[RMDB]
RNA sequence: GGGAACGACUCGAGUAGAGUCGAAAACUAUAAAUCUAGGCCUGUUUCUAUGAAGCCCUUGUUCAGACGUGUGCUUGUAGUACAUCAUGCAAUAAAAAAGAACAGAAAUUCACUUUGCUAGUAAUUGUAAGCCUAUCUACAAAAUUUACUUUUUGCAUGACGUGAUAUGGUUCGCCAUAUCACGUCAAAAAGAAACAACAACAACAAC
Reactivity to 2A3 in 0.01 (KOAc 150mM, MgCl2 10mM, bicine 150mM(pH8.5), 24C), signal-to-noise 2, nucleotides 027 to 156: c010u050a040u190a240a110a090u090c020u030a040g040g010c000c010u040g050u070u120u070c090u100a130u130g060a080a090g010c020c000c000u010u100g060u100u050c030a010g010a070c060g020u000g040u050g110c050u080u120g070u140a030g020u020a000c010a030u080c010a030u110g020c020a070a000u200a190a130a040a020a000a000g040a040a000c050a010g150a050a130a030u120u050c030a050c100u080u080u110g040c040u040a000g000u050a060a110u110u050g040u040a090a020g000c050c030u060a100u080c030u070a090c060a010a170a120a120u120u150u090a110c080u040u050u000u070u230g050c030a030

Source information: Source: RMDB library OK3TST, as collected in RNAgym. Chemical mapping of a 207-nucleotide RNA with 2A3.